[RMDB]
RNA sequence: GGGAACGACUCGAGUAGAGUCGAAAAGACGCCUGAUGGCGAACGUGCGCAAGAUAAGAAUGGUGGUAUAUACUGCCUAGAAUAACUAAUGGACGGCAGAGCGCACGAACCACCACCGUCCACCAGACCAUACGCAGGUAUUCGUACCUGCGUAUGGAAAAGAAACAACAACAACAAC
Reactivity to 2A3 in 0.01 (KOAc 150mM, MgCl2 10mM, bicine 150mM(pH8.5), 24C), signal-to-noise 7, nucleotides 027 to 126: g070a020c010g020c020c060u300g230a240u300g010g000c010g010a050a010c010g000u000g000c000g010c020a080a060g050a270u140a130a070g080a130a020u120g000g010u020g010g030u020a110u020a010u020a210c030u040g000c000c010u020a040g140a070a090u200a060a010c080u160a150a070u110g020g010a010c010g010g010c040a020g010a020g090c000g010c010a000c000g010a030a010c000c000a020c000c000a020c000c000g000u020c000c000a020c030c030a040g060a080
Reactivity to DMS in 0.01 (KOAc 150mM, MgCl2 10mM, bicine 150mM(pH8.5), 24C), signal-to-noise 4, nucleotides 027 to 126: g020a130c030g020c000c000u000g030a140u040g010g030c040g000a070a180c010g010u000g010c000g030c030a120a080g000a120u040a050a080g010a100a170u000g000g040u000g020g010u020a120u040a180u040a080c040u000g000c000c000u000a090g010a100a090u030a110a100c140u010a110a120u000g000g000a020c020g000g050c200a120g010a190g000c000g000c010a000c010g020a060a040c060c030a060c060c040a140c010c010g000u010c000c000a120c110c100a070g010a300